An RNA of 177 nucleotides, treated with DMS and 2A3 and read out base by base. The data come from the RNA Mapping Database (RMDB), libraries RFM100 and RFMREP. Conditions: 150 mM KOAc, 10 mM MgCl2 and 150 mM bicine (pH 8.5), 24 C.
RNA sequence: GGGAACGACUCGAGUAGAGUCGAAAAAGCUAUGCUACGGCAUAGCAAUUCUCUCUUCCCACAGGAUAUGAGUAACUCUUGUUGAAAUUAAGAGGGAGUUAUUCAUAUCUUGUGGUAGGAGAACAAACCUAUUCACCUUUUUCGAAAGGUGAAUAGGAAAAGAAACAACAACAACAAC
Reactivity to DMS in 0.01 (KOAc 150mM, MgCl2 10mM, bicine 150mM(pH8.5), 24C), signal-to-noise 3, nucleotides 027 to 126: a070g000c000u000a010u000g010c000u000a090c190g040g000c000a010u000a000g020c000a020a010u010u000c030u000c010u010c000u000u000c030c010c000a010c000a010g010g000a010u000a000u000g000a020g000u010a010a000c000u000c000u000u000g000u020u010g020a110a120a170u040u030a120a170g010a120g010g000g000a010g000u000u000a000u000u010c000a020u000a000u000c000u010u000g010u000g000g000u010a000g000g000a010g000a060a070c200a080a070a130
Reactivity to 2A3 in 0.01 (KOAc 150mM, MgCl2 10mM, bicine 150mM(pH8.5), 24C), signal-to-noise 9, nucleotides 027 to 126: a000g000c000u000a000u000g000c010u020a030c280g100g000c000a000u000a000g000c000a000a000u030u010c000u000c000u000c000u000u000c010c000c000a000c000a000g010g000a000u000a000u000g000a000g010u000a000a000c000u020c010u050u060g210u180u120g180a200a290a280u270u190a220a050g050a110g080g010g000a000g000u000u000a000u000u000c000a000u000a000u000c000u000u000g000u000g000g000u010a040g000g010a010g020a010a010c040a010a040a020